[RMDB]
RNA sequence: GGGAACGACUCGAGUAGAGUCGAAAAAGAGUUCAUUAUUGAUGCCAUAACCGAUGCUAAUUGUAUCGCCAUAAGUUAAAAACUGAGCAGCACGUCGGAGAAUCAAUUUGCGACUAUUAAAAGGUAAAGUAUAUGAACAAUUCGUUGUUCAUAUACUAAAAGAAACAACAACAACAAC
Reactivity to 2A3 in 0.01 (KOAc 150mM, MgCl2 10mM, bicine 150mM(pH8.5), 24C), signal-to-noise 9, nucleotides 027 to 126: a010g160a010g020u040u060c040a030u030u150a040u060u070g020a010u060g140c100c050a120u100a130a070c020c000g010a020u030g000c070u110a150a130u190u100g060u090a150u130c050g010c020c020a080u090a190a040g030u060u120a080a110a030a020a040c040u030g030a020g030c010a010g000c010a020c050g040u020c010g010g030a010g060a050a020u040c010a020a020u020u020u060g040c070g030a000c020u040a040u230u200a090a110a050a030g110g020u110a090a080
Reactivity to DMS in 0.01 (KOAc 150mM, MgCl2 10mM, bicine 150mM(pH8.5), 24C), signal-to-noise 8, nucleotides 027 to 126: a080g000a070g010u010u000c030a090u020u010a030u010u010g010a040u000g020c120c080a110u020a140a110c070c010g000a030u010g010c120u020a060a120u030u020g010u030a060u020c070g030c060c070a080u020a160a040g020u010u020a070a070a060a090a070c040u010g000a070g020c030a090g010c040a070c060g000u000c040g000g000a110g000a120a040u000c040a010a020u000u010u010g000c150g000a050c030u010a060u020u020a040a050a090a070g000g010u020a050a070
An RNA of 177 nucleotides, treated with 2A3 and DMS and read out base by base. It was measured as part of the RMDB library OK1LIB. For DMS, 23,372 sequencing reads were counted. Conditions: 150 mM KOAc, 10 mM MgCl2 and 150 mM bicine (pH 8.5), 24 C. Values cover nucleotides 27 to 126. 2A3 adducts were read by reverse transcription with SuperScript II with manganese.